[RMDB]
RNA sequence: GGGAACGACUCGAGUAGAGUCGAAAACGCUGGGAGUUCCCAUGCAGAUGGGAGCUGAAGCGCGCACGGCGAAGAACAUCUGAACUACAUGUCAACUCCUGUGCUGAAGCGCGCACGGCAACCGAAAGGUGCGAUCAACGAGAAUUCGUUCUCGUAACGGAUUCAUCAAAUUCGUUUGAUGAAUCCGAAAAGAAACAACAACAACAAC
Reactivity to 2A3 in 0.01 (KOAc 150mM, MgCl2 10mM, bicine 150mM(pH8.5), 24C), signal-to-noise 4, nucleotides 027 to 156: c020g000c010u020g010g010g000a000g000u010u020c050c030c010a000u020g010c010a020g010a050u020g000g000g020a030g000c000u010g050a190a060g000c000g000c000g000c000a010c000g000g020c000g150a300a010g020a080a010c000a010u000c020u020g030a040a050c060u180a040c290a020u010g000u010c030a030a020c010u000c000c000u010g020u020g010c010u050g050a190a050g000c000g010c000g000c000a010c000g000g000c020a040a030c000c010g030a070a040a030g030g000u030g010c000g020a080u070c070a020a060c000g000a000g000a070a170u140u100c090g040u050u000c000u010c000g040u050a100a060
Reactivity to DMS in 0.01 (KOAc 150mM, MgCl2 10mM, bicine 150mM(pH8.5), 24C), signal-to-noise 1, nucleotides 027 to 156: c060g050c000u000g050g000g000a070g040u000u020c000c030c010a020u020g020c130a090g030a030u020g010g010g000a040g030c020u000g000a030a070g060c000g030c000g020c000a300c150g000g000c000g010a060a230g000a100a220c000a040u010c000u010g000a110a070c100u000a300c070a000u010g030u000c050a010a020c030u000c020c020u000g010u000g000c030u000g000a010a030g040c000g040c010g000c000a300c050g030g020c030a020a190c030c000g020a060a200a090g040g020u000g020c040g040a130u000c070a090a060c010g010a070g050a040a110u000u000c210g020u000u000c010u000c020g000u000a100a220

About this RNA
Chemical mapping of a 207-nucleotide RNA with 2A3 and DMS. Reactivities are given for positions 27 through 156. For 2A3 the reverse transcriptase was SuperScript II with manganese. Reactivities are rounded to 0.1 and cut off at 0 and 3. It was measured as part of the RMDB library RNAMAK.